Conditions: 150 mM KOAc, 10 mM MgCl2 and 150 mM bicine (pH 8.5), 24 C. An RNA of 177 nucleotides, treated with DMS and 2A3 and read out base by base. It was measured as part of the RMDB library TTRDEL. Reactivities are rounded to 0.1 and cut off at 0 and 3. Reactivities are given for positions 27 through 126. DMS adducts were read by reverse transcription with MarathonRT. 2A3 adducts were read by reverse transcription with SuperScript II with manganese. The DMS profile rests on 7,723 reads. For 2A3, 28,533 sequencing reads were counted.
RNA sequence: GGGAACGACUCGAGUAGAGUCGAAAAGAUAUGGAGACUGAACUACACACGUAGCGCAUCGAUCUCGGAAACGAGGGAGCGUCAAGUGUGCAGUCUCCUAAGUCAAAUCGCCAGUUCGCUGGCGAAACCUUAUACUAACCUUCGGGUUAGUAUAAGGAAAAGAAACAACAACAACAAC
Reactivity to DMS in 0.01 (KOAc 150mM, MgCl2 10mM, bicine 150mM(pH8.5), 24C), signal-to-noise 6, nucleotides 027 to 126: g010a020u000a300u000g000g000a010g020a020c010u010g010a080a010c060u030a300c000a010c030a010c030g000u000a300g010c010g010c000a290u000c160g010a060u010c010u000c010g000g000a090a110a140c000g020a020g000g010g000a040g020c010g030u000c030a180a250g000u010g000u000g000c000a000g000u000c000u000c000c000u000a020a050g010u000c030a060a110a160u000c010g000c010c000a010g010u000u010c270g020c000u000g000g010c000g000a000a040a110
Reactivity to 2A3 in 0.01 (KOAc 150mM, MgCl2 10mM, bicine 150mM(pH8.5), 24C), signal-to-noise 8, nucleotides 027 to 126: g030a020u080a040u160g000g000a010g020a010c010u010g010a110a060c110u300a030c240a000c000a000c020g140u200a010g010c000g000c040a220u300c070g110a130u010c010u000c010g030g020a080a090a030c020g000a000g010g020g000a020g000c000g050u060c060a100a010g000u000g000u000g000c000a000g000u000c000u000c000c000u000a020a000g010u010c000a010a030a170u040c010g000c000c000a000g010u070u080c240g030c200u000g000g000c000g000a010a000a000